[RMDB]
RNA sequence: GGGAACGACUCGAGUAGAGUCGAAAAGGCCGCACCGGCUGCUUCAUCGUGAUUGAUGCCAUGUUGGAGCGGAUGAAGCACGAGAAGACGGUGGACAUCUAUGGCCACGUGACCUGCAUGCGAUCACAGAGGAACUACAUGGUGCAGACGGAGGACCGUGGUGUUUUAAGUUCGCUUAAAACACCACAAAAGAAACAACAACAACAAC
Reactivity to DMS in 0.01 (KOAc 150mM, MgCl2 10mM, bicine 150mM(pH8.5), 24C), signal-to-noise 1, nucleotides 027 to 156: g010g000c000c000g020c040a100c020c010g010g000c020u000g020c010u000u000c010a000u000c010g060u010g030a160u000u050g000a180u000g020c070c060a060u010g000u000u000g000g000a130g000c060g010g020a040u000g000a060a070g050c020a140c050g030a210g000a210a100g040a070c040g010g000u000g050g010a090c040a120u010c060u000a100u000g020g050c020c040a060c080g080u010g020a060c010c070u000g000c070a070u000g000c010g010a010u010c040a090c020a200g000a180g000g000a060a030c000u000a030c040a030u020g000g010u000g020c030a070g000a050c050g020g030a110g000g010a070c070c100
Reactivity to 2A3 in 0.01 (KOAc 150mM, MgCl2 10mM, bicine 150mM(pH8.5), 24C), signal-to-noise 3, nucleotides 027 to 156: g010g000c010c010g000c020a010c020c000g030g040c040u030g030c010u000u020c000a060u030c020g040u030g090a120u060u110g070a040u120g040c070c070a080u140g090u090u170g070g000a130g060c040g000g000a020u060g020a060a000g030c040a030c070g080a080g030a100a040g070a020c040g000g050u050g030g070a030c020a040u030c080u080a130u170g040g000c010c000a030c070g030u020g080a090c010c020u010g000c030a040u110g060c040g040a020u030c010a040c040a110g060a040g000g020a050a030c010u080a030c050a070u100g020g000u030g020c000a010g000a070c050g030g010a010g050g010a010c020c070
Chemical mapping of a 207-nucleotide RNA with DMS and 2A3. The reactions ran in a buffer of 150 mM KOAc, 10 mM MgCl2 and 150 mM bicine (pH 8.5), at 24 C. Reactivities are given for positions 27 through 156. Source: RMDB library OK3TST, as collected in RNAgym. For 2A3 the reverse transcriptase was SuperScript II with manganese.